Structure probing data (2A3 and DMS) for a 177-nucleotide construct. High 2A3 reactivity points to a flexible backbone, as in loops and unpaired stretches. Source: RMDB library OK2TST, as collected in RNAgym. For DMS the reverse transcriptase was MarathonRT. The RNA was probed in 150 mM KOAc, 10 mM MgCl2 and 150 mM bicine (pH 8.5) at 24 C.
RNA sequence: GGGAACGACUCGAGUAGAGUCGAAAACACAAGGACUGUGACUAAGGCUCAGUCCCUGAGGAGUGCCUUGGCAUGGGCUGCUUUAGGCUGUAAACACCCAGUUUUAUCCACUUUAUGUGAAGAAAGCAUAUCGGAAAGACUUCGGUCUUUCCGAUAUAAAAGAAACAACAACAACAAC
Reactivity to 2A3 in 0.01 (KOAc 150mM, MgCl2 10mM, bicine 150mM(pH8.5), 24C), signal-to-noise 1, nucleotides 027 to 126: c060a020c020a000a000g060g000a020c020u060g000u070g100a050c040u100a120a070g170g010c010u000c010a000g000u000c020c010c000u060g040a040g110g050a050g090u110g000c000c000u030u040g010g020c040a070u050g110g230g000c040u010g050c060u270u070u030a020g010g010c010u040g040u020a040a040a000c040a060c000c000c010a020g000u020u000u100u060a050u110c030c010a060c020u070u140u060a090u180g030u060g030a090a090g010a050a130a000g020c030
Reactivity to DMS in 0.01 (KOAc 150mM, MgCl2 10mM, bicine 150mM(pH8.5), 24C), signal-to-noise 2, nucleotides 027 to 126: c050a150c060a070a060g000g010a030c010u000g030u010g000a190c080u020a100a160g010g000c000u000c010a050g020u000c020c010c020u010g000a080g010g000a130g010u000g010c000c010u000u010g040g020c000a070u000g010g000g020c140u010g000c010u000u020u040a050g000g040c020u000g020u000a050a100a100c160a090c030c010c020a140g010u010u000u000u010a100u010c050c000a050c030u000u010u010a090u010g000u000g010a060a030g000a050a070a060g000c070